[RMDB]
RNA sequence: GGGAACGACUCGAGUAGAGUCGAAAAGAAAAUAAUAUCAGGAACCAUGCUUGUUAACGUCUCAAGUCAUAGAGUUAGACGAUUUUCAAGAUCCUGAUUGAGACAUUAUGACGGAUAAACAAGCGUCGCUGGAUCACCUAUUCGUAGGUGAUCCAGCAAAAGAAACAACAACAACAAC
Reactivity to 2A3 in 0.01 (KOAc 150mM, MgCl2 10mM, bicine 150mM(pH8.5), 24C), signal-to-noise 2, nucleotides 027 to 126: g100a000a050a010a020u230a050a020u090a000u020c020a010g000g040a000a000c150c030a050u260g070c000u020u030g000u000u020a000a000c090g060u010c000u000c000a060a300g220u050c000a210u200a050g150a040g010u000u010a030g000a030c020g300a300u050u000u050u020c010a010a000g030a010u000c000c000u000g000a000u020u010g000a000g010a000c100a080u020u150a120u300g020a000c050g000g060a060u170a200a190a040c030a050a080g110c010g030u030c060
Reactivity to DMS in 0.01 (KOAc 150mM, MgCl2 10mM, bicine 150mM(pH8.5), 24C), signal-to-noise 1, nucleotides 027 to 126: g020a090a170a200a050u020a140a050u040a160u000c040a000g040g000a010a080c090c030a190u020g000c080u000u010g000u000u000a030a030c040g050u030c000u010c060a000a180g000u010c140a240u140a100g000a050g000u100u050a030g000a070c000g000a120u000u000u010u000c030a000a000g000a060u000c000c050u000g000a000u000u000g000a150g070a000c050a060u050u010a120u030g030a100c000g030g000a090u000a150a060a040c140a060a090g000c050g000u000c080
Annotation: The record gives the reactivity of an RNA of 177 nucleotides to 2A3 and DMS. 2A3 adducts were read by reverse transcription with SuperScript II with manganese. For DMS, 1,043 sequencing reads were counted. For DMS the reverse transcriptase was MarathonRT.